[RMDB]
RNA sequence: GGGAACGACUCGAGUAGAGUCGAAAAGAUAUGGAAUCGUUGGGAGCCACAUUCGGAAACGAAUGAAUGGCGAAGAACAACAGAUUCCUAAGUCAAACUAUACGGAGAAGUUCGCUUCUCCGUAUAGGGAUUAAUUGAGGUUCGCCUCAAUUAAUCCAAAAGAAACAACAACAACAAC
Reactivity to 2A3 in 0.01 (KOAc 150mM, MgCl2 10mM, bicine 150mM(pH8.5), 24C), signal-to-noise 3, nucleotides 027 to 126: g000a010u010a010u050g000g000a010a010u000c010g010u000u000g000g010g030a010g000c000c000a040c010a010u000u000c000g000g010a010a000a010c010g030a010a000u030g050a250a300u130g000g000c000g020a080a010g000a000a000c000a000a000c010a040g010a010u000u000c000c010u000a010a010g000u000c000a010a030a050c010u000a000u000a000c000g000g010a000g010a000a020g020u090u300c290g050c180u010u000c000u000c000c000g000u000a000u000a000g000
Reactivity to DMS in 0.01 (KOAc 150mM, MgCl2 10mM, bicine 150mM(pH8.5), 24C), signal-to-noise 3, nucleotides 027 to 126: g000a020u000a010u030g000g000a010a000u000c010g000u000u000g000g000g000a020g020c000c010a080c000a010u000u010c000g030g000a000a000a010c000g010a040a010u000g000a110a220u000g020g030c010g000a050a120g000a140a210c010a000a010c010a100g010a020u000u000c000c000u000a010a090g000u000c000a150a130a300c010u000a000u000a010c000g020g010a030g000a020a020g030u000u020c300g010c010u000u000c000u010c000c000g010u000a000u000a000g010

Source: RMDB library TTRDES, as collected in RNAgym. Chemical mapping of a 177-nucleotide RNA with 2A3 and DMS. For 2A3 the reverse transcriptase was SuperScript II with manganese. The reactions ran in a buffer of 150 mM KOAc, 10 mM MgCl2 and 150 mM bicine (pH 8.5), at 24 C. For 2A3, 11,433 sequencing reads were counted.